[RMDB]
RNA sequence: GGGAACGACUCGAGUAGAGUCGAAAAGAUGGCUCGUCCAGGUCGGGUGAGUCACCCGCGAUGGUCUCUGGCGGUGCCAGGGCACCCCAUCGCUACGCGUUUCGGGUUGCGCGUGCUAAGGGGUGUGGCGCCUAGGUUCGUUCGCGAACUUAGGCGCAAAAGAAACAACAACAACAAC
Reactivity to 2A3 in 0.01 (KOAc 150mM, MgCl2 10mM, bicine 150mM(pH8.5), 24C), signal-to-noise 4, nucleotides 027 to 126: g140a050u090g000g010c010u010c010g150u050c000c010a030g040g230u220c030g030g000g010u020g020a060g080u060c010a040c000c010c020g020c020g060a090u140g030g050u030c010u000c010u050g010g000c040g050g070u110g000c000c000a000g010g020g000c010a010c000c000c000c000a020u030c010g000c010u060a010c000g000c000g000u000u070u070c060g030g010g000u040u050g000c000g000c000g020u010g000c010u040a080a040g000g000g000g000u000g000u010g020
Reactivity to DMS in 0.01 (KOAc 150mM, MgCl2 10mM, bicine 150mM(pH8.5), 24C), signal-to-noise 2, nucleotides 027 to 126: g000a200u020g000g000c000u000c010g000u010c010c010a110g000g010u040c140g020g000g000u000g010a040g010u030c000a000c000c010c020g010c160g010a050u060g010g000u010c030u020c010u000g000g000c020g000g000u040g010c020c030a020g000g010g000c030a000c010c000c000c000a060u000c220g000c020u020a020c000g010c000g010u000u000u040c090g000g000g000u000u000g020c010g000c000g000u010g000c020u020a110a130g000g000g020g000u000g010u000g000
Record summary: This 177-nucleotide RNA was probed chemically with 2A3 and DMS. Values cover nucleotides 27 to 126. The 2A3 profile rests on 5,871 reads. The RNA was probed in 150 mM KOAc, 10 mM MgCl2 and 150 mM bicine (pH 8.5) at 24 C.